[RMDB]
Overview: An RNA of 177 nucleotides, treated with DMS and 2A3 and read out base by base. It was measured as part of the RMDB library OK2TRN. For DMS the reverse transcriptase was MarathonRT.
RNA sequence: GGGAACGACUCGAGUAGAGUCGAAAAAAGGAGGGUCCUUCCAAAGGUCACAACCACUUCGGAGAGCCUCUCACUUGUCCUCUCUUGACCUGUAUGGGCCUGAGACCAUCCAGACUCAAAGGCUGGAGUGCUUCAUGUCAUUCGUGACAUGAAGCACAAAAGAAACAACAACAACAAC
Reactivity to DMS in 0.01 (KOAc 150mM, MgCl2 10mM, bicine 150mM(pH8.5), 24C), signal-to-noise 2, nucleotides 027 to 126: a050a010g030g000a110g000g000g020u000c010c030u020u000c040c030a090a060a030g010g000u000c060a130c220a060a080c090c090a100c080u010u000c080g000g010a060g000a080g020c150c010u020c040u000c040a060c080u000u010g000u000c010c010u010c030u010c050u000u000g000a050c030c000u000g000u010a100u010g000g010g000c020c020u010g000a080g010a110c120c070a150u010c000c000a030g010a050c040u010c080a090a100a100g010g000c010u000g000g020a180
Reactivity to 2A3 in 0.01 (KOAc 150mM, MgCl2 10mM, bicine 150mM(pH8.5), 24C), signal-to-noise 1, nucleotides 027 to 126: a000a000g010g010a040g000g000g030u050c000c000u080u010c020c000a110a090a000g010g000u140c050a040c080a160a090c060c020a070c040u070u080c030g010g000a040g000a030g040c000c010u080c010u000c010a130c150u050u050g020u030c010c000u020c000u000c000u070u080g060a090c000c000u060g040u100a070u130g000g000g070c010c020u060g020a040g000a040c010c020a010u000c010c000a000g050a120c040u020c090a160a060a000g110g030c000u060g000g010a000
2A3 adducts were read by reverse transcription with SuperScript II with manganese. In probing experiments dimethyl sulfate is read out at A N1 and C N3, which are open when not base-paired. The reactions ran in a buffer of 150 mM KOAc, 10 mM MgCl2 and 150 mM bicine (pH 8.5), at 24 C.